RNA sequence: GGGAACGACUCGAGUAGAGUCGAAAAAUGGGCGAGGUGUCCGGUCCCAUGAGUCAAAAGCCGGUAAGAACCUCUGGCCCGAGGUCGCUCGUCAGGACUGGACCACUGGACGCAGCACUCUGGUCACAUCCUGACAGAAAUUCGUUUCUGUCAGGAUAAAAGAAACAACAACAACAAC
Reactivity to 2A3 in 0.01 (KOAc 150mM, MgCl2 10mM, bicine 150mM(pH8.5), 24C), signal-to-noise 7, nucleotides 027 to 126: a000u100g030g030g010c020g010a060g000g040u030g000u020c000c000g000g010u020c000c000c000a050u110g020a010g050u050c050a030a030a080a090g130c160c070g010g010u030a040a020g020a060a020c000c020u020c040u060g110g030c010c030c010g010a000g010g010u050c020g000c010u010c000g030u040c080a040g000g000a020c000u040g010g000a010c000c010a010c010u020g030g020a030c020g000c030a000g050c010a040c030u030c020u040g040g010u060c030a040c000
Reactivity to DMS in 0.01 (KOAc 150mM, MgCl2 10mM, bicine 150mM(pH8.5), 24C), signal-to-noise 5, nucleotides 027 to 126: a090u030g010g000g010c020g020a130g010g030u010g000u000c000c010g010g000u020c010c000c260a140u020g000a040g020u010c040a090a090a090a150g030c180c100g020g000u010a040a050g010a180a030c010c000u000c010u020g010g010c130c100c060g000a010g000g010u020c070g000c000u010c020g000u010c200a130g000g000a020c020u000g000g000a040c040c040a040c020u000g010g000a080c040g000c040a060g010c080a050c030u010c040u010g000g000u010c060a110c170